[RMDB]
RNA sequence: GGGAACGACUCGAGUAGAGUCGAAAAUUCAGUGUAAAGUAGCAGAUGCAGGAAUACGACUUAAAAAGAAAGAAUGGACAUCCUGUUAUCUUUUUCUUUCUUCAGCUCAUAUUAUAUUUUACAAAGACGGUCGAUUUAUAUUCGUAUAAAUCGACCGAAAAGAAACAACAACAACAAC
Reactivity to 2A3 in 0.01 (KOAc 150mM, MgCl2 10mM, bicine 150mM(pH8.5), 24C), signal-to-noise 2, nucleotides 027 to 126: u040u010c040a000g080u000g030u100a090a080a010g000u010a010g000c050a000g020a090u080g050c020a000g010g040a000a060u120a080c010g050a030c090u040u050a140a170a010a020a000g100a060a050a000g070a060a020u080g070g000a000c000a030u130c030c030u060g080u110u150a050u070c010u000u100u000u030u000c010u000u040u000c000u050u110c080a020g020c010u020c020a010u000a040u120u260a030u010a050u090u080u060u090a060c090a040a200a040g080a020
Reactivity to DMS in 0.01 (KOAc 150mM, MgCl2 10mM, bicine 150mM(pH8.5), 24C), signal-to-noise 1, nucleotides 027 to 126: u030u000c000a120g010u010g000u000a080a000a020g010u000a090g000c190a030g000a120u150g020c020a050g000g030a100a060u000a110c010g000a060c070u000u010a090a020a000a030a000g000a020a110a000g100a000a000u000g010g080a030c190a170u000c120c200u000g000u000u030a070u020c000u000u030u000u000u000c000u000u010u000c020u050u000c020a030g000c080u010c030a050u010a060u000u000a170u000a030u010u000u000u030a090c030a070a000a160g000a200